[RMDB]
RNA sequence: GGGAACGACUCGAGUAGAGUCGAAAAUGAUAACCAUGCGUGUCAGCUGACUCUGUAAACCUCUGCUGUGUUGUUGCACUGGUCGGCGUUUUGUCAGCCUGAGUAUUCAGCACAGCAGGGCUACAGAUGCCUCUGUGAAUUUCGAUUCACAGAGGCAAAAAGAAACAACAACAACAAC
Reactivity to 2A3 in 0.01 (KOAc 150mM, MgCl2 10mM, bicine 150mM(pH8.5), 24C), signal-to-noise 2, nucleotides 027 to 126: u160g030a020u050a120a020c050c020a030u150g050c070g020u060g110u080c020a040g030c110u060g000a060c030u000c000u020g030u010a000a070a040c000c010u050c000u050g000c000u000g000u000g000u010u010g010u010u030g000c010a020c040u010g000g000u080c020g000g060c000g100u130u100u190u300g010u000c010a010g000c000c000u000g000a000g000u000a110u040u070c010a010g000c000a000c000a000g000c000a000g000g000g000c000u010a010c000a000g000a030
Reactivity to DMS in 0.01 (KOAc 150mM, MgCl2 10mM, bicine 150mM(pH8.5), 24C), signal-to-noise 1, nucleotides 027 to 126: u010g000a180u030a240a170c030c000a050u050g000c210g030u010g010u000c010a120g000c030u000g000a020c110u000c030u000g000u000a010a090a200c200c000u000c000u000g030c030u000g010u000g040u000u000g000u000u000g030c040a060c000u000g010g000u010c180g000g000c010g000u000u000u020u050g000u000c010a070g000c000c000u000g000a070g040u000a010u070u000c010a000g000c000a020c000a010g000c020a000g010g000g040c150u020a000c010a020g000a000
Background: Conditions: 150 mM KOAc, 10 mM MgCl2 and 150 mM bicine (pH 8.5), 24 C. Chemical mapping of a 177-nucleotide RNA with 2A3 and DMS. Reactivities are given for positions 27 through 126. For DMS, 1,846 sequencing reads were counted. For 2A3 the reverse transcriptase was SuperScript II with manganese. Source: RMDB library RFM100, as collected in RNAgym.